[RMDB]
RNA sequence: GGGAACGACUCGAGUAGAGUCGAAAAGACGGUGCUGCUCGACGCCAACGUGCUGAUCGCAUUGGUGGUCGCCGAGCAUGUGCAUCAUGAUGCCGCAGCGGACUGGCUCAUGGCGUCCGACACCGGAUGGCCCGAACUGAUUCGUCAGUUCGGGCCAAAAAGAAACAACAACAACAAC
Reactivity to 2A3 in 0.01 (KOAc 150mM, MgCl2 10mM, bicine 150mM(pH8.5), 24C), signal-to-noise 1, nucleotides 027 to 126: g070a030c030g020g000u050g000c020u050g050c090u020c000g020a000c000g020c010c000a050a000c000g010u000g040c000u050g160a300u090c040g000c030a040u110u300g000g140u050g000g080u300c130g000c050c000g000a010g000c000a000u090g040u050g000c000a010u050c020a040u020g000a020u300g020c000c020g000c020a020g160c140g070g000a100c050u050g020g020c000u000c000a000u040g020g000c000g030u000c100c070g040a130c030a030c030c000g000g050a000